The data come from the RNA Mapping Database (RMDB), library M2PK90. Chemical mapping of a 177-nucleotide RNA with DMS.
RNA sequence: GGGAACGACUCGAGUAGAGUCGAAAAAUCUUGGCGAAGUCAGCGCGGAAGGAGCGCGCUACUCCUUACCCUCGCCUUUUUUUUUCCGCUCCCGUUCGCGAAAGCGUUCAGCGGAAAAGGGACCAAAUUGACGUAAAUCGUUCGCGAUUUACGUCAAAAAAGAAACAACAACAACAAC
Reactivity to DMS in 0.01 (KOAc 150mM, MgCl2 10mM, bicine 150mM(pH8.5), 24C), signal-to-noise 1, nucleotides 027 to 126: a020u020c060u000u000g010g020c050g000a010a020g050u000c090a040g000c100g030c090g040g000a150a120g000g020a070g000c040g000c070g000c040u000a050c030u000c070c060u000u000a180c090c040c010u000c040g000c000c010u000u000u000u000u000u000u000u000u000c020c000g020c000u000c070c140c090g020u000u020c040g030c020g030a110a070a230g020c000g010u000u000c040a050g010c000g010g000a000a000a010a020g000g000g000a110c090c090a050a010a120
Conditions: 150 mM KOAc, 10 mM MgCl2 and 150 mM bicine (pH 8.5), 24 C.